[RMDB]
RNA sequence: GGGAACGACUCGAGUAGAGUCGAAAAACUCAUCUGUGUCGCAAAACAGUGAGAAGAUUUAUAGGUAGAGGUGAAAAGCCUAACGAGCCUGGUGAUAGCUGGUUGCCCAGAAUAGAAUUUCAGUUCGUAUUAUGUGAGAAUUCGUUCUCACAUAAUAAAAAGAAACAACAACAACAAC
Reactivity to 2A3 in 0.01 (KOAc 150mM, MgCl2 10mM, bicine 150mM(pH8.5), 24C), signal-to-noise 4, nucleotides 027 to 126: a000c040u030c050a090u060c030u020g060u030g080u160c070g000c110a010a090a090a150c000a070g000u020g070a080g040a080a030g050a040u100u270u120a130u160a090g040g030u030a010g010a010g090g000u030g030a130a110a090a010g010c010c020u010a050a020c030g020a030g020c000c030u000g000g040u050g040a100u080a060g030c020u030g040g000u040u050g010c000c010c000a020g030a060a040u120a050g090a080a090u050u160u140c080a050g060u050u050c020g000
Reactivity to DMS in 0.01 (KOAc 150mM, MgCl2 10mM, bicine 150mM(pH8.5), 24C), signal-to-noise 9, nucleotides 027 to 126: a090c010u000c020a050u010c020u000g010u000g010u010c170g020c180a090a070a150a040c020a020g010u000g000a070g010a120a080g010a120u010u010u010a090u000a050g010g010u000a100g010a050g010g010u000g000a070a060a120a160g010c010c010u010a060a100c070g010a140g000c020c020u000g010g020u000g010a080u000a090g010c030u000g000g010u000u000g010c040c010c020a100g010a050a070u000a080g000a070a070u000u010u010c110a080g010u000u000c100g010